Conditions: 150 mM KOAc, 10 mM MgCl2 and 150 mM bicine (pH 8.5), 24 C. The record gives the reactivity of an RNA of 177 nucleotides to DMS and 2A3. Source: RMDB library M2PK50, as collected in RNAgym. In probing experiments dimethyl sulfate is read out at A N1 and C N3, which are open when not base-paired.
[RMDB]
RNA sequence: GGGAACGACUCGAGUAGAGUCGAAAACGCCAGCGAUUCGUCGCUGGCGAAAUAAAUUCAGCGGUUUAAAUUUCGUCCGCAUAUCCGCUGAUGCGGACGAAAAAAGGCAGUUGUUCGCAACUGCCAACUAUAUUCUGAGUUUCGACUCAGAAUAUAGAAAAGAAACAACAACAACAAC
Reactivity to DMS in 0.01 (KOAc 150mM, MgCl2 10mM, bicine 150mM(pH8.5), 24C), signal-to-noise 3, nucleotides 027 to 126: c040g010c020c000a010g050c020g030a030u000u010c150g010u000c010g060c010u000g000g030c010g010a000a030a020u000a050a090a110u010u010c040a030g010c060g000g010u000u000u000a060a120a160u000u000u010c020g010u000c000c000g000c000a020u000a070u010c030c050g000c070u000g000a050u000g010c000g010g020a010c000g000a000a010a020a050a060a080g010g010c000a000g000u000u000g010u000u020c180g020c010a010a020c000u000g000c010c000a010a030
Reactivity to 2A3 in 0.01 (KOAc 150mM, MgCl2 10mM, bicine 150mM(pH8.5), 24C), signal-to-noise 3, nucleotides 027 to 126: c010g000c000c010a020g020c000g030a020u040u070c140g020u000c020g140c020u000g010g000c000g000a000a010a000u010a000a040a030u140u070c030a010g050c040g090g130u080u180u270a060a150a120u120u170u090c010g000u000c000c000g000c010a000u030a040u030c030c030g000c040u050g000a010u020g000c000g000g000a000c000g000a000a000a000a020a010a000g000g010c000a000g000u000u020g010u030u060c130g000c070a010a000c000u000g000c000c000a000a000
For DMS, 4,099 sequencing reads were counted.